[RMDB]
Source: RMDB library OK1LIB, as collected in RNAgym. An RNA of 177 nucleotides, treated with DMS and 2A3 and read out base by base. The reactions ran in a buffer of 150 mM KOAc, 10 mM MgCl2 and 150 mM bicine (pH 8.5), at 24 C.

RNA sequence: GGGAACGACUCGAGUAGAGUCGAAAACUCGAAAGAGACCUGCAUAUCUUAGGCAGAUGAACAAGUCACGUCUGAAAAGCGAAAGCCCUAAGAUAUGCAGCUGUGAUGACUUGUCGCAGAAAAUAAAGAGUCAUAUGAUAUUCGUAUCAUAUGACUCAAAAGAAACAACAACAACAAC
Reactivity to DMS in 0.01 (KOAc 150mM, MgCl2 10mM, bicine 150mM(pH8.5), 24C), signal-to-noise 5, nucleotides 027 to 126: c000u000c010g000a120a110a100g000a030g010a150c260c000u010g000c010a000u000a000u000c000u010u000a010g000g010c020a010g000a010u000g000a070a090c000a010a010g000u000c020a300c020g010u000c000u010g010a180a080a160a130g010c010g000a070a100a120g000c020c000c000u000a000a020g000a010u000a010u000g000c010a010g000c000u000g010u000g010a010u010g000a000c000u000u000g000u000c010g020c010a030g000a190a050a070a070u060a100a100a120
Reactivity to 2A3 in 0.01 (KOAc 150mM, MgCl2 10mM, bicine 150mM(pH8.5), 24C), signal-to-noise 9, nucleotides 027 to 126: c010u010c010g030a030a040a010g070a010g030a060c000c000u000g000c000a000u000a000u000c000u000u000a000g010g000c010a000g000a010u010g010a060a040c000a000a010g010u010c010a010c060g030u000c000u020g100a240a250a120a010g020c030g060a080a030a010g010c000c000c000u000a000a000g000a000u000a000u000g000c000a000g000c000u000g000u010g010a030u090g010a010c000u000u020g010u010c000g000c010a010g110a040a090a020a020u290a030a120a030